[RMDB]
RNA sequence: GGGAACGACUCGAGUAGAGUCGAAAACGAAUCUCGCGCCAUGCGGGCUCAAUGUCGAUGUCGAGCUGCUGGCCGGUUUCGGCGAGCACGCGCUGCGCGGUUUCGAUCGUGCGCGGCAGCCCGCUCAGAUACGUCCUCAUUUCGAUGAGGACGUAUCAAAAGAAACAACAACAACAAC
Reactivity to 2A3 in 0.01 (KOAc 150mM, MgCl2 10mM, bicine 150mM(pH8.5), 24C), signal-to-noise 4, nucleotides 027 to 126: c010g020a010a050u020c100u030c090g030c010g000c030c030a100u190g000c020g030g020g000c020u020c040a120a170u180g080u120c050g090a070u150g080u120c050g020a040g020c020u050g000c040u080g040g010c000c000g020g000u030u090u150c010g000g000c000g030a010g000c020a020c120g000c010g000c070u140g010c010g000c000g030g000u010u020u030c070g000a030u060c040g030u040g030c070g010c030g060g000c030a010g030c000c010c000g000c020u030c030a030
Reactivity to DMS in 0.01 (KOAc 150mM, MgCl2 10mM, bicine 150mM(pH8.5), 24C), signal-to-noise 4, nucleotides 027 to 126: c080g010a060a070u000c010u000c010g020c110g000c030c120a080u010g020c020g000g010g000c030u010c050a130a070u010g010u000c120g030a090u010g020u010c050g010a060g010c040u000g020c070u010g000g020c020c000g000g000u000u000u000c010g000g010c010g000a020g010c010a050c120g010c020g010c040u010g040c000g010c010g010g000u000u000u000c160g010a030u000c020g030u000g020c030g020c010g020g000c080a070g010c010c010c000g000c020u010c160a090